[RMDB]
RNA sequence: GGGAACGACUCGAGUAGAGUCGAAAAAGUUCUAGUCCUCACCUAAGAUCAGACUCACAUGGCCCUCAAAGCAAGAGCACUUGGUUGGGCUUUGUGGUGGGGAUAAGUGUCUCAUUUUUAGUCCCAAAUUAAAAACGAGAUUUUGGGCUGUACAUCAGAGUGGUAAAUAGUUCGCUAUUUACCACUCAAAAGAAACAACAACAACAAC
Reactivity to 2A3 in 0.01 (KOAc 150mM, MgCl2 10mM, bicine 150mM(pH8.5), 24C), signal-to-noise 2, nucleotides 027 to 156: a000g030u080u010c000u010a040g060u000c000c000u000c000a000c000c030u130a110a000g020a170u170c080a070g120a150c080u090c050a000c010a020u070g000g000c000c000c020u040c070a070a040a000g040c030a100a090g000a040g100c050a060c090u020u050g050g000u130u030g020g040g000c000u010u000u030g020u010g010g000u010g000g010g010g000a000u030a060a040g030u000g060u010c020u000c050a110u040u150u060u100u130a020g060u160c010c020c000a020a000a000u080u040a020a060a040a020a010c130g060a090g010a150u010u030u060u010g010g000g000c010u020g050u250a120c030a090u090c070a100
Reactivity to DMS in 0.01 (KOAc 150mM, MgCl2 10mM, bicine 150mM(pH8.5), 24C), signal-to-noise 2, nucleotides 027 to 156: a050g010u010u010c060u010a170g000u000c020c020u010c020a090c020c030u000a090a120g020a100u030c100a130g020a150c130u010c030a220c050a140u000g030g020c020c010c000u000c030a060a030a100g000c060a060a120g010a130g020c070a040c040u000u020g020g020u000u000g000g010g020c030u000u000u000g040u000g000g040u010g000g010g000g020a030u000a020a130g010u000g040u010c000u000c050a050u000u000u000u000u000a020g020u010c050c050c140a070a070a070u010u020a010a010a030a040a030c020g020a050g000a100u000u000u000u000g000g020g040c110u000g000u000a050c160a130u000c080a300

Conditions: 150 mM KOAc, 10 mM MgCl2 and 150 mM bicine (pH 8.5), 24 C. An RNA of 207 nucleotides, treated with 2A3 and DMS and read out base by base. DMS adducts were read by reverse transcription with MarathonRT.